Structure probing data (2A3 and DMS) for a 177-nucleotide construct. The DMS profile rests on 1,674 reads. The data come from the RNA Mapping Database (RMDB), library RFM100. High DMS reactivity at an A or C suggests that its Watson-Crick edge is free. Conditions: 150 mM KOAc, 10 mM MgCl2 and 150 mM bicine (pH 8.5), 24 C.
[RMDB]
RNA sequence: GGGAACGACUCGAGUAGAGUCGAAAAGAAAGAAAGAAAGAAGGCUGUUGAUGAUGACAUACAGUUAAAACAGAUGGGAAUCUCUCUGAAAGAGGAUGAGGACACCACUCUACACUGAAACAGUGAAAUUUAGCUGGUGGUUCGCCACCAGCUAAAUAAAAGAAACAACAACAACAAC
Reactivity to 2A3 in 0.01 (KOAc 150mM, MgCl2 10mM, bicine 150mM(pH8.5), 24C), signal-to-noise 2, nucleotides 027 to 126: g080a000a090a000g140a070a120a000g060a030a070a010g180a000a020g050g010c020u030g000u070u000g000a120u010g050a080u110g050a030c000a020u180a000c030a060g020u040u130a070a000a000a030c080a020g010a030u010g000g000g060a000a060u050c020u000c000u000c000u020g110a080a120a150g060a100g090g000a060u090g010a020g000g010a020c030a060c100c010a020c040u000c000u030a040c030a020c050u010g050a060a060a050c020a010g000u020g060a010a130
Reactivity to DMS in 0.01 (KOAc 150mM, MgCl2 10mM, bicine 150mM(pH8.5), 24C), signal-to-noise 2, nucleotides 027 to 126: g000a040a090a140g020a080a230a030g020a050a020a030g000a100a010g020g020c040u010g030u020u020g020a030u020g010a040u020g020a110c050a080u030a170c140a070g000u040u000a010a140a050a210c110a080g000a050u030g000g000g000a120a110u000c000u000c030u000c010u000g020a000a040a120g010a150g020g030a030u010g000a070g030g000a020c140a100c000c000a030c040u020c000u000a160c040a030c010u010g020a150a140a040c080a060g020u020g000a010a080